[RMDB]
RNA sequence: GGGAACGACUCGAGUAGAGUCGAAAACGCCUGACAACAGGCGCCAAGUCAACCCUGGACCUGUUCCUCAGGGCCCAAUCGGGUAAUUACAGAGGCAGUGUUACCCAUUUCACAGGUGAUUCCAGGCAAUUAUCUAUGCGUUCGCGCAUAGAUAAUUAAAAGAAACAACAACAACAAC
Reactivity to DMS in 0.01 (KOAc 150mM, MgCl2 10mM, bicine 150mM(pH8.5), 24C), signal-to-noise 4, nucleotides 027 to 126: c140g020c000c000u000g020a110c300a130a120c010a010g000g040c040g050c030c040a070a120g000u010c170a090a120c190c050c010u010g010g000a090c030c010u000g010u000u000c070c090u010c040a090g000g020g010c010c010c030a080a080u000c150g010g000g010u000a020a040u000u010a070c050a090g010a110g010g020c070a050g010u000g000u000u000a010c010c000c000a170u010u000u000c100a060c100a070g000g010u000g010a150u010u010c000c010a050g010g020c210
Reactivity to 2A3 in 0.01 (KOAc 150mM, MgCl2 10mM, bicine 150mM(pH8.5), 24C), signal-to-noise 3, nucleotides 027 to 126: c040g010c010c000u030g020a060c070a300a050c010a050g000g000c010g000c010c010a020a020g110u080c030a010a070c040c000c020u000g010g010a020c000c030u010g010u120u090c010c020u040c060a050g030g050g000c010c010c020a030a070u180c090g020g000g040u020a040a050u180u100a050c040a060g120a100g170g080c060a020g030u000g010u090u040a030c000c000c010a010u090u230u110c100a080c010a030g060g020u060g100a150u110u040c010c000a010g020g020c020